RNA sequence: GGGAACGACUCGAGUAGAGUCGAAAAAGGACUUUGAAAAGAGAGUCAAAGAGUGCUUGAAAUUGCCGGGAGGGAAGCGGAUGGGGGCUGGCGAUGCGCCCCGGUCGUAUGCGGAACGGCUUCUGCUGGUUCGAUAUCUGUUCGCAGAUAUCGAACCAAAAGAAACAACAACAACAAC
Reactivity to 2A3 in 0.01 (KOAc 150mM, MgCl2 10mM, bicine 150mM(pH8.5), 24C), signal-to-noise 2, nucleotides 027 to 126: a000g000g000a030c010u030u000u030g080a030a060a040a000g280a000g000a000g030u050c030a000a200a000g040a000g180u130g000c020u100u050g070a090a120a300u170u070g040c010c010g000g060g050a130g000g000g020a050a050g000c060g010g000a010u070g060g010g010g000g020c000u000g010g140c140g060a040u110g030c010g190c000c000c000c000g010g000u040c010g030u070a020u200g200c040g000g000a070a040c000g000g000c000u030u020c010u000g050c060u020